About this RNA: This 177-nucleotide RNA was probed chemically with DMS and 2A3.
RNA sequence: GGGAACGACUCGAGUAGAGUCGAAAAAGGGUUUCACUGUGUUAGCCAGGAUGGUCUCGAUUUCCUGACCUCGUGAUCCGCCUGCCUUGGCCUCCUAAAGUGCUGGGAUUACAGACGUGACCACUGCUCAUUUUCGUAGGUUCGCCUACGAAAAUGAAAAAGAAACAACAACAACAAC
Reactivity to DMS in 0.01 (KOAc 150mM, MgCl2 10mM, bicine 150mM(pH8.5), 24C), signal-to-noise 2, nucleotides 027 to 126: a060g000g010g010u000u000u010c020a070c050u000g000u000g000u000u000a080g020c030c020a030g020g000a060u000g020g000u000c030u010c080g020a090u010u000u000c020c010u000g000a050c080c050u010c070g020u000g000a020u000c000c030g000c020c000u000g010c040c020u000u000g000g010c010c010u010c040c040u010a030a060a060g020u010g010c020u000g010g010g010a090u000u000a040c070a050g020a070c070g010u010g020a080c030c010a030c060u000g000c140
Reactivity to 2A3 in 0.01 (KOAc 150mM, MgCl2 10mM, bicine 150mM(pH8.5), 24C), signal-to-noise 1, nucleotides 027 to 126: a000g090g000g010u040u060u040c030a020c050u130g010u010g020u190u140a070g080c040c010a010g000g000a040u110g060g140u000c040u000c090g170a190u040u020u100c000c000u020g040a080c030c010u020c020g020u020g010a070u010c020c020g000c080c000u010g000c020c010u000u050g000g000c000c000u000c000c020u090a180a110a000g040u050g070c010u040g030g020g030a050u000u150a040c050a060g050a050c070g050u030g000a020c020c010a020c070u020g000c000
Reactivities are given for positions 27 through 126. For 2A3 the reverse transcriptase was SuperScript II with manganese. The DMS profile rests on 4,397 reads. The RNA was probed in 150 mM KOAc, 10 mM MgCl2 and 150 mM bicine (pH 8.5) at 24 C.